Structure probing data (2A3) for a 207-nucleotide construct. It was measured as part of the RMDB library OK3TST. Reactivities are given for positions 27 through 156. The 2A3 profile rests on 639 reads. Conditions: 150 mM KOAc, 10 mM MgCl2 and 150 mM bicine (pH 8.5), 24 C. For 2A3 the reverse transcriptase was SuperScript II with manganese.
RNA sequence: GGGAACGACUCGAGUAGAGUCGAAAACAGUAAUAUACUAGGCACUAUAUUAUUUUUUGGUGAUGGUAAAAACUUUCAGUACAAGGCAAGAACUUGUAAUUUGUGAAGGCUAAAGAAACCAUGAUUCUGAACAGUAUUCCAGUAGAUAAUUUUAGUAGCAAGAAAUUAUAUUCGUAUAAUUUCUUGCAAAAGAAACAACAACAACAAC
Reactivity to 2A3 in 0.01 (KOAc 150mM, MgCl2 10mM, bicine 150mM(pH8.5), 24C), signal-to-noise 2, nucleotides 027 to 156: c010a000g040u040a040a010u070a010u050a120c020u040a060g060g000c030a000c020u010a030u010a010u160u040a010u040u140u040u050u100u110g000g000u010g060a010u000g000g080u100a000a100a110a000a000c020u130u090u040c030a010g010u010a000c000a010a010g000g020c070a150a110g050a260a060c010u010u000g010u030a070a080u090u130u180g090u060g010a000a000g000g000c010u020a070a050a170g000a110a050a000c000c000a020u110g050a040u140u080c010u010g050a050a010c020a010g060u030a050u090u050c000c020a000g160u150a060g080a040u160a130a000u250u180u210u300a010g130u300a010